[RMDB]
RNA sequence: GGGAACGACUCGAGUAGAGUCGAAAAGAUUUAAACAGAUGGAGAUACACAUAUGUUUGAAUCCCAGUAACAAAAAUCCUGGUAUCUCGGGUAUACAGUAGUGCAGAUACUGUAUUUUUAAUGCUCCUUAGGUUUUCCAUCUUCGGAUGGAAAACAAGUCGGAUAUUUGAUUCGUCAAAUAUCCGACAAAAGAAACAACAACAACAAC
Reactivity to 2A3 in 0.01 (KOAc 150mM, MgCl2 10mM, bicine 150mM(pH8.5), 24C), signal-to-noise 1, nucleotides 027 to 156: g000a000u030u010u030a000a010a010c000a010g050a010u010g000g000a000g010a010u020a020c000a000c000a000u010a030u020g000u010u020u030g070a040a030u040c040c000c010a080g190u100a180a070c110a140a210a000a000a020u020c010c010u010g000g020u000a000u000c010u000c000g010g000g000u010a020u010a010c000a000g030u020a000g030u030g210c110a030g050a300u030a000c000u000g000u020a000u000u010u000u070u130a130a190u160g050c030u090c090c040u050u040a040g130g000u010u000u000u000c000c000a000u000c010u020u040c090g080g000a000u000g000g000a000a000a000a000c000a000a020

An RNA of 207 nucleotides, treated with 2A3 and read out base by base. The 2A3 profile rests on 965 reads. Source: RMDB library M2RFOK, as collected in RNAgym.